RNA sequence: GGGAACGACUCGAGUAGAGUCGAAAAAUAAUUUAACUUUAAAUGGUAUUGAUCUAGUUGGGCUUGAAUCAUUUUAAUAUCAUCUGCAAUUGUCCGACGCGAAACAUUAACAUCUUGCGCAAGUUGCAGAUACUUCCUGGUUCGCCAGGAAGUAUCUAAAAGAAACAACAACAACAAC
Reactivity to 2A3 in 0.01 (KOAc 150mM, MgCl2 10mM, bicine 150mM(pH8.5), 24C), signal-to-noise 2, nucleotides 027 to 126: a000u160a020a050u100u170u130a040a060c050u140u060u100a070a260a030u070g020g020u010a050u020u090g030a070u010c060u050a030g120u010u110g080g040g010c040u030u150g160a030a000u050c010a050u040u000u110u090a150a030u050a000u130c000a000u080c030u020g040c020a030a100u070u140g040u040c070c030g020a060c010g000c000g000a000a170a000c010a080u050u050a130a020c070a080u190c020u050u110g000c060g020c000a150a000g040u020u010g010c040
Reactivity to DMS in 0.01 (KOAc 150mM, MgCl2 10mM, bicine 150mM(pH8.5), 24C), signal-to-noise 2, nucleotides 027 to 126: a070u000a040a000u030u040u010a070a100c010u000u010u000a030a120a060u000g000g000u010a030u000u000g000a040u030c040u010a140g010u020u000g020g030g000c080u000u020g000a080a040u000c050a040u020u030u000u000a000a040u030a060u010c110a030u000c030u000g000c020a060a080u000u010g000u010c140c050g010a240c010g000c030g010a040a070a100c150a060u040u010a070a060c120a090u010c030u000u040g010c060g020c120a050a030g000u000u010g010c200